[RMDB]
RNA sequence: GGGAACGACUCGAGUAGAGUCGAAAACGAUCCUUUAUGUGCUUAAAUCUUAAGCCUAGAGGUGUCAGAAAAGUUACCACAGGGAUAACUGGCUUGUGGCAGCCAAGCGCUCAUAGCGACGCUGCUUGCCAGUCUGUAUUUUCGAAUACAGACUGGCAAAAGAAACAACAACAACAAC
Reactivity to 2A3 in 0.01 (KOAc 150mM, MgCl2 10mM, bicine 150mM(pH8.5), 24C), signal-to-noise 3, nucleotides 027 to 126: c030g050a050u060c010c020u040u040u020a130u180g090u110g000c000u050u030a060a130a240u160c050u120u080a030a000g000c000c000u000a000g000a000g020g020u080g050u030c010a030g100a060a130a010a000g070u060u080a030c010c000a050c090a100g100g000g000a090u040a150a040c050u060g080g030c000u040u060g030u040g040g030c030a000g010c000c020a070a000g000c010g000c020u080c120a190u220a100g030c010g020a000c050g010c020u010g000c000u000u000
Reactivity to DMS in 0.01 (KOAc 150mM, MgCl2 10mM, bicine 150mM(pH8.5), 24C), signal-to-noise 3, nucleotides 027 to 126: c200g010a050u000c000c010u000u000u010a020u040g000u040g030c000u000u000a010a080a150u040c200u000u000a000a010g010c010c010u000a050g000a010g000g010u000g000u000c010a110g040a100a060a040a050g000u010u000a030c020c010a150c140a120g020g010g000a080u000a030a020c080u000g010g020c040u000u000g000u000g000g000c010a030g000c010c020a030a130g000c010g030c040u000c120a100u010a080g020c030g030a130c150g010c010u010g020c000u000u000